[RMDB]
The data come from the RNA Mapping Database (RMDB), library RFMREP.
An RNA of 177 nucleotides, treated with DMS and read out base by base.
RNA sequence: GGGAACGACUCGAGUAGAGUCGAAAAUGGAGGGUGAUACUCCCGUUCAUCCCUGAGUUGCUCGUGCGUACGAUCCGUUUUCUUUGAGUCGCGUUGUUUGGGAAUGCAGCGCAAAGUAGGUGGUAAAUCAAAUGGUCUUCUUCGGAAGACCAUUUGAAAAAGAAACAACAACAACAAC
Reactivity to DMS in 0.01 (KOAc 150mM, MgCl2 10mM, bicine 150mM(pH8.5), 24C), signal-to-noise 1, nucleotides 027 to 126: u000g040g000a130g000g020g020u020g010a150u010a170c110u000c010c000c020g000u000u000c040a110u020c010c020c010u030g020a120g010u000u000g020c020u000c060g010u060g000c070g000u020a060c060g000a080u000c020c020g030u010u000u010u000c030u020u000u000g000a090g010u010c060g000c020g010u000u020g020u000u010u000g020g000g000a130a060u010g010c020a020g020c030g000c060a050a030a040g000u050a030g000g010u000g010g010u010a060a060a170